[RMDB]
RNA sequence: GGGAACGACUCGAGUAGAGUCGAAAAGGCGUGUCACGAGCGGCCGCGCGUAAGCGUGCCGAGGACCUGCUGAUCCGAGUCAAUCUCGGCGAACGAAUGAAACACCGCCCGGGUGACAUGAGCGGCGCGACCAGUGGUAUUUCGAUACCACUGGUCGAAAAGAAACAACAACAACAAC
Reactivity to 2A3 in 0.01 (KOAc 150mM, MgCl2 10mM, bicine 150mM(pH8.5), 24C), signal-to-noise 1, nucleotides 027 to 126: g020g000c060g000u110g000u000c010a020c130g070a070g110c010g020g000c050c060g020c000g000c020g070u100a070a050g010c020g060u070g000c000c000g020a050g030g030a020c050c030u080g000c050u040g030a050u000c030c000g030a000g010u040c020a000a270u070c000u000c000g000g020c020g030a070a030c020g060a030a060u210g050a150a040a010c040a010c000c000g030c000c010c000g020g040g010u060g030a010c010a050u090g020a050g060c010g060g000c070g000
Reactivity to DMS in 0.01 (KOAc 150mM, MgCl2 10mM, bicine 150mM(pH8.5), 24C), signal-to-noise 2, nucleotides 027 to 126: g000g010c030g040u000g000u020c040a110c120g010a140g020c020g080g020c040c080g000c030g030c170g040u010a110a150g000c020g040u010g050c010c000g000a070g020g000a060c010c050u020g010c030u020g000a140u020c110c060g030a040g000u000c140a120a190u010c030u000c000g000g000c060g000a120a080c090g010a150a050u010g000a070a120a210c050a090c070c020g000c030c030c060g000g000g000u000g020a050c060a040u000g000a050g010c010g000g020c060g000

The record gives the reactivity of an RNA of 177 nucleotides to 2A3 and DMS. It was measured as part of the RMDB library OK2TST.